[RMDB]
RNA sequence: GGGAACGACUCGAGUAGAGUCGAAAAGCGUCACGUGCUGAUGCGCGGGGGUAGAGCACUGACAAGGCUAGGGGGCACACCCGCUUACCAAACCUUAUCAAACUCCGAAUACCGUGCAAUGGAACGUGGGAAUAGGCUCAUUCGUGAGCCUAUUCCCAAAAGAAACAACAACAACAAC
Reactivity to 2A3 in 0.01 (KOAc 150mM, MgCl2 10mM, bicine 150mM(pH8.5), 24C), signal-to-noise 2, nucleotides 027 to 126: g060c060g200u120c090a000c000g000u010g020c110u300g050a040u020g000c000g000c000g000g000g000g000g000u030a000g000a000g000c000a010c080u000g000a000c010a020a030g000g010c000u000a000g020g060g000g000g020c070a020c000a050c160c030c030g020c000u020u030a230c000c010a060a000a000c000c000u000u000a000u000c000a060a110a160c020u010c000c040g000a020a080u000a010c000c000g020u000g000c020a030a040u080g060g040a150a000c000g000u010